Structure probing data (DMS and 2A3) for a 207-nucleotide construct.
For 2A3 the reverse transcriptase was SuperScript II with manganese.
Conditions: 150 mM KOAc, 10 mM MgCl2 and 150 mM bicine (pH 8.5), 24 C.
RNA sequence: GGGAACGACUCGAGUAGAGUCGAAAAAACGCCGCAAUUCGCCGUCGAGUCUCUGGGUGCUGGGUUGGAAUUGAUCAGUUUUGCGCGAACCCGUCUAAAACUUCAACCGUCAAGCUCUUUGUGGGUAAACUCUCUUUUUGUAUACGUGCAAAACAUCGACACGGAAUAGAUUCGUCUAUUCCGUGUCAAAAGAAACAACAACAACAAC
Reactivity to DMS in 0.01 (KOAc 150mM, MgCl2 10mM, bicine 150mM(pH8.5), 24C), signal-to-noise 2, nucleotides 027 to 156: a100a040c050g020c040c020g030c030a190a240u000u010c030g030c050c010g030u000c090g010a160g040u000c000u000c010u000g000g030g010u000g020c010u000g010g010g020u030u000g030g000a100a110u000u020g000a140u000c050a090g020u000u000u000u000g000c080g040c020g000a110a120c020c030c040g010u010c070u000a090a080a070a030c040u010u000c050a060a060c060c050g010u020c040a050a070g000c030u000c040u000u000u010g020u000g030g060g000u000a050a040a050c080u000c030u010c030u010u020u010u000u010g040u010a160u000a090c070g040u000g040c040a040a020a040a060c050a060u010c040
Reactivity to 2A3 in 0.01 (KOAc 150mM, MgCl2 10mM, bicine 150mM(pH8.5), 24C), signal-to-noise 2, nucleotides 027 to 156: a000a000c110g050c100c040g000c060a070a160u190u070c050g000c020c010g050u020c020g030a040g020u020c020u020c030u090g110g000g030u080g000c010u010g050g010g020u010u030g050g040a130a140u120u090g000a060u090c030a000g000u000u000u030u020g010c030g000c020g030a010a090c010c000c010g040u010c080u120a070a110a150a300c040u100u070c030a070a030c010c050g070u080c060a040a000g010c010u020c000u040u060u040g040u040g000g000g010u030a100a090a040c050u060c000u000c000u110u080u020u040u080g070u060a120u000a070c030g000u000g030c000a020a000a020a020c000a000u150c060
About this RNA: For 2A3, 812 sequencing reads were counted. Values are in units of 0.01, from 0 to 300, in steps of 10. It was measured as part of the RMDB library OK3TST.